Structure probing data (DMS and 2A3) for a 207-nucleotide construct.
The data come from the RNA Mapping Database (RMDB), library PDB130.
RNA sequence: GGGAACGACUCGAGUAGAGUCGAAAAGGUGCCCAAGUCAGUGUGUCUCCCUUACAGUCUGCCAUCGAUGUGGCAGCCAAGGCAGAGCAUCGUUGUGUAGAAAGGGCAUGGACAACAGCUGAUCGUGUUGGGAUUGAUCCCGGCUUGAGGCGUUGCCGACAAAAGAUAAGUUCGCUUAUCUUUUGUCAAAAGAAACAACAACAACAAC
Reactivity to DMS in 0.01 (KOAc 150mM, MgCl2 10mM, bicine 150mM(pH8.5), 24C), signal-to-noise 6, nucleotides 027 to 156: g020g010u000g020c010c010c010a060a100g020u000c030a050g040u000g020u010g000u000c020u000c030c010c040u000u000a130c090a140g020u000c010u000g020c010c010a040u000c050g030a170u000g040u000g000g010c060a100g010c020c080a060a120g070g010c030a070g010a300g000c030a040u000c040g010u000u000g020u000g020u000a080g000a100a110a080g010g000g040c300a050u000g020g010a070c010a050a040c000a120g030c010u000g000a090u010c070g020u000g020u000u010g000g010g020a160u000u020g000a140u000c010c020c000g010g000c020u010u000g000a150g010g020c030g020u000u000g010c010c020
Reactivity to 2A3 in 0.01 (KOAc 150mM, MgCl2 10mM, bicine 150mM(pH8.5), 24C), signal-to-noise 6, nucleotides 027 to 156: g140g030u130g030c010c000c000a010a010g050u020c020a010g010u010g000u010g140u040c080u190c030c010c000u010u070a080c050a100g120u010c000u000g010c000c000a000u020c030g050a060u110g030u070g140g060c060a010g000c000c010a070a050g130g000c040a040g000a020g100c000a000u030c010g000u010u050g040u020g010u090a020g020a050a030a000g030g000g000c090a080u160g050g000a000c000a050a000c000a050g030c000u030g020a070u090c110g060u100g110u160u050g000g000g020a040u040u230g060a070u100c020c010c000g000g010c010u020u060g010a030g020g000c020g020u030u030g080c010c010